This 177-nucleotide RNA was probed chemically with 2A3 and DMS. The DMS profile rests on 33,864 reads. Values cover nucleotides 27 to 126. Conditions: 150 mM KOAc, 10 mM MgCl2 and 150 mM bicine (pH 8.5), 24 C.
[RMDB]
RNA sequence: GGGAACGACUCGAGUAGAGUCGAAAAUCCAACGCCGUCAGGCAGGUGUUGGUGGCGAUCCGAUGCAGCCAGGUGCGUAGCGAGGACUUGCCCGCGAAGCCCUCAUAGGCCUUCCAGGCCCGCAGCACUCUCUAUUGGAAUUCGUUCCAAUAGAGAGAAAAGAAACAACAACAACAAC
Reactivity to 2A3 in 0.01 (KOAc 150mM, MgCl2 10mM, bicine 150mM(pH8.5), 24C), signal-to-noise 9, nucleotides 027 to 126: u020c000c000a010a010c010g000c010c000g100u140c070a060g030g100c030a030g010g020u020g010u020u040g020g010u010g010g010c030g020a040u030c010c010g030a040u140g030c030a010g030c030c020a050g030g060u140g050c040g040u070a040g020c030g040a140g020g010a080c060u090u120g070c020c000c000g020c020g030a030a010g000c010c010c000u030c010a110u170a060g030g000c010c000u110u050c040c020a040g020g010c000c010c010g040c030a050g040c010a020
Reactivity to DMS in 0.01 (KOAc 150mM, MgCl2 10mM, bicine 150mM(pH8.5), 24C), signal-to-noise 9, nucleotides 027 to 126: u020c000c000a060a040c050g010c010c000g010u030c130a080g000g030c050a170g010g000u000g010u000u000g010g010u000g000g010c090g010a090u010c020c010g010a100u020g010c050a130g010c030c060a070g010g010u020g010c030g010u010a140g000c060g010a100g010g010a090c070u010u010g000c020c010c040g000c060g000a080a230g000c040c010c010u000c070a100u020a120g010g000c040c040u020u030c080c080a110g020g020c010c010c050g010c080a080g000c090a240